[RMDB]
RNA sequence: GGGAACGACUCGAGUAGAGUCGAAAACAGCGCCAGCGAGCGGCAACCGAGCUCGUCGGCUUUCCGCAGGGUAGCAGCGGUGGCUGCGGUGAUGAUCUCGCCCGAGGUCGGACCUCCUAGCUCCAUCACUCUAGAGGGGAUUCGUCCCCUCUAGAGUAAAAGAAACAACAACAACAAC
Reactivity to 2A3 in 0.01 (KOAc 150mM, MgCl2 10mM, bicine 150mM(pH8.5), 24C), signal-to-noise 1, nucleotides 027 to 126: c030a010g090c030g000c060c000a020g030c020g040a010g020c000g000g000c040a020a090c040c070g000a020g040c040u010c030g060u000c040g070g000c100u030u100u020c010c020g030c010a030g110g020g050u100a060g070c080a000g010c030g130g000u070g040g040c020u030g000c030g000g000u040g020a090u080g020a020u040c020u020c030g040c000c030c060g010a010g010g070u070c010g020g030a070c000c010u000c010c000u030a020g030c000u030c030c040a050u160c040
Reactivity to DMS in 0.01 (KOAc 150mM, MgCl2 10mM, bicine 150mM(pH8.5), 24C), signal-to-noise 3, nucleotides 027 to 126: c110a130g010c090g010c000c010a060g010c020g020a050g030c030g020g010c160a080a120c180c090g000a150g010c040u010c030g030u000c060g010g000c010u010u010u010c030c020g030c070a070g020g000g020u020a050g020c040a080g010c010g010g020u000g020g010c010u010g020c060g020g010u000g010a130u020g000a050u000c030u000c030g010c080c070c100g000a050g020g010u000c020g000g000a220c080c010u000c050c020u000a110g020c040u000c020c030a100u010c130
Conditions: 150 mM KOAc, 10 mM MgCl2 and 150 mM bicine (pH 8.5), 24 C.
Structure probing data (2A3 and DMS) for a 177-nucleotide construct.
High 2A3 reactivity points to a flexible backbone, as in loops and unpaired stretches.